[RMDB]
The record gives the reactivity of an RNA of 177 nucleotides to DMS and 2A3.
Reactivities are given for positions 27 through 126.
The reactions ran in a buffer of 150 mM KOAc, 10 mM MgCl2 and 150 mM bicine (pH 8.5), at 24 C.
RNA sequence: GGGAACGACUCGAGUAGAGUCGAAAAGAUAUGGACCAUCAUAGCGCACAUCGAUCUCGGAAACGAGGGAGUGCCUUAUGAGUGGUCCUAAGUCAAAUCCUUGUGUUACUUCGGUAACACAAGGAAACACCACCGUUGUGUUCGCACAACGGUGGUGAAAAGAAACAACAACAACAAC
Reactivity to DMS in 0.01 (KOAc 150mM, MgCl2 10mM, bicine 150mM(pH8.5), 24C), signal-to-noise 2, nucleotides 027 to 126: g020a070u000a300u000g000g030a010c000c000a060u000c000a010u000a010g050c300g000c010a000c000a230u000c180g020a030u020c030u020c030g000g010a170a160a150c030g020a000g000g000g010a000g000u000g000c020c030u000u010a010u000g000a050g020u010g020g020u000c000c010u020a010a000g030u000c070a180a060a120u000c000c000u010u000g000u010g010u000u000a050c000u000u050c240g050g000u000a000a000c000a000c000a000a020g000g000a010a030a070
Reactivity to 2A3 in 0.01 (KOAc 150mM, MgCl2 10mM, bicine 150mM(pH8.5), 24C), signal-to-noise 1, nucleotides 027 to 126: g040a010u060a010u170g000g000a010c000c010a030u000c010a000u000a000g000c030g060c040a010c000a180u300c050g160a180u100c000u000c000g040g040a120a050a070c020g040a000g000g020g000a040g000u010g000c000c000u070u090a020u000g080a050g300u020g010g000u010c010c000u000a010a000g050u020c040a050a020a200u050c000c030u000u000g010u000g000u020u020a020c010u010u050c300g130g000u010a000a020c000a000c010a000a000g020g000a000a000a010